[RMDB]
Chemical mapping of a 170-nucleotide RNA with 2A3 and DMS.
RNA sequence: GGGAACGACUCGAGUAGAGUCGAAAAAGAAGGUCAUUCGAGAUUCAAGAGGUGAGGAGGGAUCCCCGAGACGCUGGAGGAGCACCGGGAAAAAGAAAAGAAGGCAAGGAAUUGGUAGAAAAGAGCGCAAGCAGUCUCUUCGGAGACUGCAAAAGAAACAACAACAACAAC
Reactivity to 2A3 in 0.01 (KOAc 150mM, MgCl2 10mM, bicine 150mM(pH8.5), 24C), signal-to-noise 2, nucleotides 027 to 129: a030g040a000a010g020g000u020c020a080u080u050c090g020a010g020a030u130u090c050a030a000g030a000g070g010u090g000a030g010g010a010g010g020g010a050u020c020c000c010c000g040a050g000a030c060g000c020u030g030g000a060g010g000a020g000c020a040c020c000g000g030g000a000a060a000a010a000g070a000a020a000a000g010a010a010g020g020c030a000a000g020g000a080a050u100u050g050g020u050a060g050a030a060a030a040g070a000g030c060g000c050a080a070
Reactivity to DMS in 0.01 (KOAc 150mM, MgCl2 10mM, bicine 150mM(pH8.5), 24C), signal-to-noise 4, nucleotides 027 to 129: a060g060a060a060g040g030u050c030a090u060u030c000g020a040g010a030u070u030c120a030a050g030a020g020g060u000g060a040g000g030a080g060g010g000a010u000c060c040c020c030g030a120g050a100c030g030c040u000g010g020a060g000g020a130g060c070a000c050c030g020g000g030a010a020a020a050a030g020a100a050a060a060g020a020a070g020g030c060a000a060g010g040a080a080u040u000g060g000u020a150g030a060a080a030a070g030a030g000c100g010c170a070a120
Source information:
The DMS profile rests on 8,201 reads.